[RMDB]
RNA sequence: GGGAACGACUCGAGUAGAGUCGAAAAGUAGAGAUAAGAGACUGUAGCUCUAUGGCCACCAAGAGCACGGAUAACAAAAACAAUGUAUUCUUCGAUGAGCCUGCCUGAAUGAGUUUCAAAGCAGGCAUUUCAUUGUCUAGUUCGCUAGACAAUGAAAAAAAGAAACAACAACAACAAC
Reactivity to 2A3 in 0.01 (KOAc 150mM, MgCl2 10mM, bicine 150mM(pH8.5), 24C), signal-to-noise 8, nucleotides 027 to 126: g070u080a020g020a020g010a110u080a200a040g070a010g020a060c020u020g010u050a050g010c000u010c000u020a160u090g040g000c080c040a100c020c020a050a010g000a000g040c010a000c010g030g010a050u100a230a070c070a060a060a040a030a000c030a070a080u090g030u050a230u050u050c030u050u060c030g230a220u120g020a030g000c000c000u000g000c000c010u020g030a050a040u130g050a100g150u020u040u020c030a030a020a000g000c000a000g000g000c000a000
Reactivity to DMS in 0.01 (KOAc 150mM, MgCl2 10mM, bicine 150mM(pH8.5), 24C), signal-to-noise 5, nucleotides 027 to 126: g010u010a040g000a070g000a100u000a060a080g000a130g000a120c070u010g000u000a140g010c000u010c010u000a070u000g010g010c060c060a110c060c040a110a050g000a030g010c020a030c020g000g000a090u040a120a090c110a050a080a060a070a100c140a070a090u030g000u000a110u020u000c040u000u000c100g010a130u030g010a150g000c010c000u000g000c010c050u000g000a020a010u010g010a120g020u040u000u000c010a030a110a230g000c010a000g010g000c020a020